[RMDB]
RNA sequence: GGGAACGACUCGAGUAGAGUCGAAAAGGCGCGCGCCGGGACCUCCCACCGUCGGGGCGUCUGGCGGAUCGGUGGGCCAACGGGGCCGUGACCGGUAAAUGCGCUCCCUUGGCCGAUCGCGGAUGGAAGUAUACGUAGCUUUCGAGCUACGUAUACUAAAAGAAACAACAACAACAAC
Reactivity to 2A3 in 0.01 (KOAc 150mM, MgCl2 10mM, bicine 150mM(pH8.5), 24C), signal-to-noise 3, nucleotides 027 to 126: g060g010c040g000c010g010c020g010c050c000g000g020g050a070c000c040u000c000c000c010a080c040c060g130u140c040g000g000g040g070c050g040u040c030u030g070g000c030g020g030a040u050c030g010g010u070g020g020g000c010c000a060a050c090g030g000g060g030c020c010g050u050g080a070c040c040g040g030u100a150a170a050u160g010c060g000c040u060c000c000c020u010u020g010g000c020c020g080a050u080c060g010c030g120g000a030u080g070g050a080
Reactivity to DMS in 0.01 (KOAc 150mM, MgCl2 10mM, bicine 150mM(pH8.5), 24C), signal-to-noise 4, nucleotides 027 to 126: g000g010c020g010c020g000c070g020c040c000g000g010g010a110c060c060u000c030c020c010a190c100c070g010u000c050g000g000g020g020c200g020u000c010u010g000g010c040g010g000a040u000c040g030g020u000g010g000g010c020c010a050a050c250g010g010g000g010c020c010g010u000g000a130c050c060g010g000u010a040a080a050u000g000c080g010c010u000c010c000c050u000u000g010g010c010c010g000a030u000c020g020c100g000g010a110u010g000g000a200